[RMDB]
RNA sequence: GGGAACGACUCGAGUAGAGUCGAAAAUAAUGACCACCAUCUUAAUAGACCUGGUGUCUAUUGUGGCUCUGAUUUUAUUGACAUUGUCAGGCGGUUAGCAGUAUCACUGUUCCAGCCUAUUACUUAUACACUAACCGGUUCGCCGGUUAGAAAAGAAACAACAACAACAAC
Reactivity to DMS in 0.01 (KOAc 150mM, MgCl2 10mM, bicine 150mM(pH8.5), 24C), signal-to-noise 9, nucleotides 027 to 129: u060a040a020u000g000a120c000c000a130c020c150a000u050c150u030u030a040a020u020a020g020a050c030c030u050g030g040u050g030u030c020u020a000u010u020g020u030g010g000c120u020c000u000g000a090u020u010u010u010a090u050u060g000a120c080a070u020u030g030u000c070a020g010g030c030g030g010u020u020a030g020c060a060g020u000a000u020c140a080c010u020g010u030u060c070c070a060g000c050c020u020a050u030u020a070c080u010u000a080u010a120c160a140
Reactivity to 2A3 in 0.01 (KOAc 150mM, MgCl2 10mM, bicine 150mM(pH8.5), 24C), signal-to-noise 9, nucleotides 027 to 129: u080a000a080u090g060a050c010c010a010c030c020a090u070c050u080u210a050a020u020a040g020a000c010c030u070g200g010u180g020u020c000u020a050u020u060g010u000g000g000c010u000c010u060g110a120u040u020u040u120a160u050u060g040a040c080a070u100u150g030u090c010a020g020g020c000g030g010u060u160a000g000c000a000g000u040a030u300c070a050c060u020g000u040u010c020c000a010g000c010c000u010a030u020u050a010c010u070u090a050u000a140c060a000
Chemical mapping of a 170-nucleotide RNA with DMS and 2A3.
The reactions ran in a buffer of 150 mM KOAc, 10 mM MgCl2 and 150 mM bicine (pH 8.5), at 24 C.
DMS adducts were read by reverse transcription with MarathonRT.
As a SHAPE reagent, 2A3 marks flexible, mostly unpaired nucleotides at the ribose 2'-OH.
The data come from the RNA Mapping Database (RMDB), library 15KLIB.
The DMS profile rests on 43,203 reads.
High DMS reactivity at an A or C suggests that its Watson-Crick edge is free.